[RMDB]
RNA sequence: GGGAACGACUCGAGUAGAGUCGAAAAGAUAUGGACUGUGGGAACGUAUUCACGCGAAGAACUCGGAAACGAGGGAGCGUGAUACGGGAACACAGUCCUAAGUCAAACAACGCGUUCGCGCGUUGAACAUGGUGCUACUCUUCGGAGUAGCACCAUGAAAAGAAACAACAACAACAAC
Reactivity to 2A3 in 0.01 (KOAc 150mM, MgCl2 10mM, bicine 150mM(pH8.5), 24C), signal-to-noise 1, nucleotides 027 to 126: g010a040u090a040u140g000g000a010c000u000g000u020g000g000g030a040a010c020g000u010a050u120u300c030a010c000g010c000g180a300a130g030a060a030c010u000c000g000g030a100a050a050c020g000a020g030g010g030a010g010c000g010u000g000a000u000a000c000g000g000g000a030a000c000a000c040a000g000u000c000c000u000a000a000g000u000c010a030a020a030c000a010a010c000g000c000g030u010u100c300g010c000g000c010g150u000u000g000a020a000
Reactivity to DMS in 0.01 (KOAc 150mM, MgCl2 10mM, bicine 150mM(pH8.5), 24C), signal-to-noise 2, nucleotides 027 to 126: g010a070u030a300u000g000g010a030c000u000g000u030g000g000g000a300a170c030g010u000a050u000u020c000a000c000g000c000g060a120a170g010a120a190c000u000c000g010g010a140a070a160c020g000a010g000g000g000a110g000c000g030u000g000a000u000a000c000g000g000g000a290a140c000a000c000a000g000u030c000c000u000a000a040g010u000c010a090a150a300c020a030a010c000g000c010g040u000u010c220g020c010g010c010g010u000u030g000a070a220